[RMDB]
RNA sequence: GGGAACGACUCGAGUAGAGUCGAAAAGCUAGGCAUUUCGAUGCCUAGCGAGCGCAGAGUCUAUGCAUCUCUGAUUCACACAACAGCCGUGUCUAUGCGUGGGAGUAUCCCUCUUCGGAGGGAUAAAAAAGACUGAAAGUUUCGACUUUCAGUCUUUAAAAGAAACAACAACAACAAC
Reactivity to 2A3 in 0.01 (KOAc 150mM, MgCl2 10mM, bicine 150mM(pH8.5), 24C), signal-to-noise 2, nucleotides 027 to 126: g000c000u000a000g000g000c010a000u030u080u120c200g100a000u040g000c000c000u000a000g010c010g000a040g000c090g000c010a010g020a010g040u000c050u150a140u140g010c020a130u060c030u010c020u070g050a080u110u150c040a010c010a000c020a130a100c000a080g100c000c000g060u050g000u010c030u050a060u120g010c040g020u030g000g020g000a070g010u010a000u000c000c000c000u020c000u030u020c070g030g000a000g020g000g010a000u010a030a000a000
Reactivity to DMS in 0.01 (KOAc 150mM, MgCl2 10mM, bicine 150mM(pH8.5), 24C), signal-to-noise 5, nucleotides 027 to 126: g010c000u000a000g000g000c000a020u000u000u010c200g010a020u000g000c000c000u000a000g000c000g000a040g020c170g000c030a030g000a050g010u000c080u010a070u010g010c090a090u000c020u000c020u010g000a110u000u000c060a060c050a060c090a060a090c140a070g010c060c060g010u000g010u010c060u000a060u000g010c050g020u000g000g010g010a120g010u000a020u000c000c000c000u000c000u000u010c170g020g000a020g000g010g000a000u000a000a020a060